[RMDB]
RNA sequence: GGGAACGACUCGAGUAGAGUCGAAAAUGACAAAAUCGGGAAUGUGUCUGAUUGGACUGACUUUGUGCGCGGCAUGGCUUCCGACGAUACGAGCAUUAUCACGGAUCAUAUUAAGGUCGAUAUUGAAAAUUCUGAUGGAUAUAAGUGGUUACAGGAAGCCUUGCAAUCAGUUCGCUGAUUGCAAGGCAAAAGAAACAACAACAACAAC
Reactivity to 2A3 in 0.01 (KOAc 150mM, MgCl2 10mM, bicine 150mM(pH8.5), 24C), signal-to-noise 2, nucleotides 027 to 156: u140g010a020c030a020a070a010a090u110c000g070g030g000a090a110u070g040u020g040u050c010u030g030a170u000u190g000g020a010c010u030g020a010c020u110u090u070g040u030g010c090g020c000g040g080c040a110u020g050g000c000u000u020c000c040g030a070c050g000a020u020a140c050g050a020g020c000a020u040u060a080u060c010a000c030g060g010a040u080c020a020u080a070u130u140a060a030g030g010u020c000g040a030u010a130u070u030g090a030a030a050a010u130u000c010u040g020a060u030g000g060a000u020a000u020a200a050g000u070g040g000u040u050a050c000a030g000g050a010a070